[RMDB]
RNA sequence: GGGAACGACUCGAGUAGAGUCGAAAACGCUAUACGUUAUGUGGCGAAGAAGUGCAGAUGCACGGUGGCGUUGUCCGUACCGCGUCCGGUGGGCUGGCGGGCAGUACGCUGUCUGUUGAUGCGGCAAUGAUUACCUGGAGUUCGCUCCAGGUAAUCAAAAAGAAACAACAACAACAAC
Reactivity to DMS in 0.01 (KOAc 150mM, MgCl2 10mM, bicine 150mM(pH8.5), 24C), signal-to-noise 4, nucleotides 027 to 126: c020g000c020u000a050u010a070c170g010u010u000a100u010g020u010g000g030c010g020a170a100g000a090a100g030u000g000c020a060g000a210u000g000c040a020c190g010g020u000g020g000c010g000u000u010g010u000c010c010g000u000a110c030c060g000c080g010u010c050c060g030g010u000g030g000g000c030u000g000g000c040g010g010g000c030a050g010u010a040c040g000c000u000g000u010c010u010g010u010u000g010a220u000g010c030g010g030c170a080a080
Reactivity to 2A3 in 0.01 (KOAc 150mM, MgCl2 10mM, bicine 150mM(pH8.5), 24C), signal-to-noise 1, nucleotides 027 to 126: c010g000c030u080a040u040a170c020g040u110u050a120u300g030u030g000g050c000g070a070a000g100a130a020g120u140g030c020a000g020a070u060g060c000a010c090g000g000u000g000g000c010g000u010u020g010u010c000c000g010u010a170c010c040g010c040g060u000c070c040g160g100u130g060g010g000c040u080g050g010c000g000g010g000c010a000g050u040a030c030g000c020u010g010u000c000u000g000u050u020g010a000u010g000c010g020g000c050a030a140
Source: RMDB library OK2TRN, as collected in RNAgym.
Structure probing data (DMS and 2A3) for a 177-nucleotide construct.
The RNA was probed in 150 mM KOAc, 10 mM MgCl2 and 150 mM bicine (pH 8.5) at 24 C.
For DMS, 4,047 sequencing reads were counted.
DMS adducts were read by reverse transcription with MarathonRT.